[RMDB]
RNA sequence: GGGAACGACUCGAGUAGAGUCGAAAAGAUAUGGACUCUACCCAGCAACAGCCGUUGGUCGGAAACGACCGGGCGGACAUGCUGGUAGAGUCCUAAGUCAAACUAUCGAAGGUUCGCCUUCGAUAGAGAUCUACACAUACUUCGGUAUGUGUAGAUCAAAAGAAACAACAACAACAAC
Reactivity to 2A3 in 0.01 (KOAc 150mM, MgCl2 10mM, bicine 150mM(pH8.5), 24C), signal-to-noise 6, nucleotides 027 to 126: g000a000u010a000u050g000g000a000c000u000c000u010a060c230c300c080a010g000c040a040a240c050a150g000c000c010g020u050u040g000g000u010c000g000g010a020a010a000c000g000a020c020c040g010g050g000c040g000g000a050c190a210u300g000c000u010g010g000u000a000g000a000g000u000c000c000u000a000a000g000u000c010a010a060a080c000u000a000u010c010g010a000a010g070g010u090u190c280g220c020c000u010u010c000g000a000u000a000g000a050
Reactivity to DMS in 0.01 (KOAc 150mM, MgCl2 10mM, bicine 150mM(pH8.5), 24C), signal-to-noise 5, nucleotides 027 to 126: g000a020u000a040u020g000g000a010c000u000c000u000a000c160c070c110a000g030c000a140a070c120a240g010c010c010g000u000u000g010g020u000c000g020g000a010a010a010c010g020a010c010c010g020g010g000c000g000g000a030c040a300u010g020c010u000g000g010u000a010g000a020g010u000c000c000u000a000a050g000u000c010a220a160a290c010u010a000u000c000g010a010a010g010g010u000u010c300g010c010c010u000u000c000g000a000u010a010g010a080
An RNA of 177 nucleotides, treated with 2A3 and DMS and read out base by base. DMS adducts were read by reverse transcription with MarathonRT. For 2A3, 24,454 sequencing reads were counted.